[RMDB]
RNA sequence: GGGAACGACUCGAGUAGAGUCGAAAACCGCCACCUCCACAGUGGGCAUUCUCAAGAGUGUUCAGUGUGGGGGUGCACCGGUUUCGACAGGGCGGGCAAUGGUGAGCAGGCAACCCGAGAGGCGACGUGUGCCUGGUCAAUUCGUUGACCAGGCACAAAAAGAAACAACAACAACAAC
Reactivity to 2A3 in 0.01 (KOAc 150mM, MgCl2 10mM, bicine 150mM(pH8.5), 24C), signal-to-noise 1, nucleotides 027 to 126: c000c000g040c040c010a000c000c000u020c000c000a030c000a050g120u000g000g000g000c020a000u010u000c090u080c080a160a120g010a000g020u000g060u040u000c010a010g080u050g000u000g000g020g010g000g010u000g050c000a010c020c020g010g000u000u010u030c000g030a030c020a030g000g090g080c030g000g000g000c000a000a020u070g000g000u130g000a070g000c050a010g100g000c010a010a140c000c000c000g020a030g000a000g060g040c040g000a060c120g060
Reactivity to DMS in 0.01 (KOAc 150mM, MgCl2 10mM, bicine 150mM(pH8.5), 24C), signal-to-noise 1, nucleotides 027 to 126: c000c090g000c130c000a030c010c000u010c040c030a000c050a020g030u000g000g000g000c030a000u000u000c000u030c300a180a140g020a000g010u000g000u000u000c010a000g120u010g000u000g000g000g000g050g000u000g020c060a040c270c020g080g000u000u000u000c030g000a030c000a150g030g000g050c030g000g010g020c080a090a140u010g000g000u010g000a070g060c130a100g010g000c030a110a080c050c000c070g000a100g000a080g030g000c020g030a030c150g040